RNA sequence: GGGAACGACUCGAGUAGAGUCGAAAAGAUAUGGACCUGACUGACGGGAGCUGGUACUCGGAAACGAGUACACAGCGACGAUCGUUUCAGGUCCUAAGUCAAAACGUCCGUACUUCGGUACGGACGAGUAUCGUCUGUUGUUCGCAACAGACGAUACAAAAGAAACAACAACAACAAC
Reactivity to DMS in 0.01 (KOAc 150mM, MgCl2 10mM, bicine 150mM(pH8.5), 24C), signal-to-noise 2, nucleotides 027 to 126: g010a010u000a080u000g000g000a010c000c000u000g010a060c300u010g010a000c000g020g020g000a050g050c000u010g000g000u010a000c000u000c000g010g000a010a030a040c020g000a010g000u000a000c000a050c000a010g020c020g010a100c280g000a070u000c010g010u000u000u000c010a000g020g010u000c000c020u000a000a040g000u010c010a120a040a120a150c010g010u000c000c010g010u000a000c000u000u030c290g030g020u000a010c010g000g000a000c000g000a040
Reactivity to 2A3 in 0.01 (KOAc 150mM, MgCl2 10mM, bicine 150mM(pH8.5), 24C), signal-to-noise 2, nucleotides 027 to 126: g000a010u030a000u030g000g000a020c010c000u010g030a060c100u220g100a010c000g000g000g100a090g000c010u020g030g020u000a010c000u010c000g000g000a020a020a000c050g010a000g040u030a010c230a030c030a010g010c020g000a020c050g030a100u060c010g000u020u040u090c000a010g040g000u000c000c000u010a000a000g010u010c010a000a060a100a140c000g000u000c000c000g000u000a010c010u030u080c300g120g000u000a010c000g000g000a000c000g000a000